Structure probing data (2A3) for a 207-nucleotide construct. Source: RMDB library VIROID, as collected in RNAgym. For 2A3 the reverse transcriptase was SuperScript II with manganese.

RNA sequence: GGGAACGACUCGAGUAGAGUCGAAAAACGUGACUUACCUGUAUGGUGGCAAGGGCUCGAAGAGUUAUCCCCGGGGAAACCUACUCGAGCGAGGCGGAGAUCGAGCGCCAGUUCGUGCGCGGCGAACUGAAGUUUCUUCGGAUUCUUCUUGUUCGCGCCACGUCUCAUAGUUCGCUAUGAGACGUGGAAAAGAAACAACAACAACAAC
Reactivity to 2A3 in 0.01 (KOAc 150mM, MgCl2 10mM, bicine 150mM(pH8.5), 24C), signal-to-noise 2, nucleotides 027 to 156: a010c070g150u110g100a080c030u130u220a040c010c000u090g180u300a240u260g050g010u030g020g000c040a090a100g090g010g000c000u030c020g180a140a050g010a000g040u020u050a010u070c000c000c000c020g000g010g010g000a000a000a110c000c060u010a020c070u020c030g000a000g020c080g020a080g010g020c040g030g040a100g020a110u090c120g070a060g030c020g020c000c000a000g050u020u070c000g020u050g060c100g000c150g040g070c010g000a000a000c000u000g010a000a000g020u000u000u000c080u000u180c280g090g000a020u010u010c000u010u010c000u030u120g000u000u000c000g000c000g000